[RMDB]
RNA sequence: GGGAACGACUCGAGUAGAGUCGAAAAGAUAUGGAGUACAUCUAUUGAUUAUCGUGGAGCAACAGCUAUGUGUCGGAAACGACACUGUAGACAUGCUCCACGAUAAUCAAUAGAGUACUCCUAAGUCGAGUGUAGAGAAGUUCGCUUCUCUACACUCAAAAGAAACAACAACAACAAC
Reactivity to DMS in 0.01 (KOAc 150mM, MgCl2 10mM, bicine 150mM(pH8.5), 24C), signal-to-noise 2, nucleotides 027 to 126: g010a090u000a300u010g000g020a040g010u000a010c020a130u000c000u010a000u000u000g000a020u000u010a000u000c000g050u000g010g020a020g010c000a030a080c300a200g010c010u010a030u000g020u000g020u000c000g000g020a110a090a220c010g010a020c000a000c010u020g010u000a010g000a040c100a230u000g000c000u000c000c010a010c000g000a000u000a000a000u000c010a000a000u000a010g000a020g020u010a000c000u000c010c000u000a010a080g000u010c100
The record gives the reactivity of an RNA of 177 nucleotides to DMS. For DMS, 2,641 sequencing reads were counted. For DMS the reverse transcriptase was MarathonRT.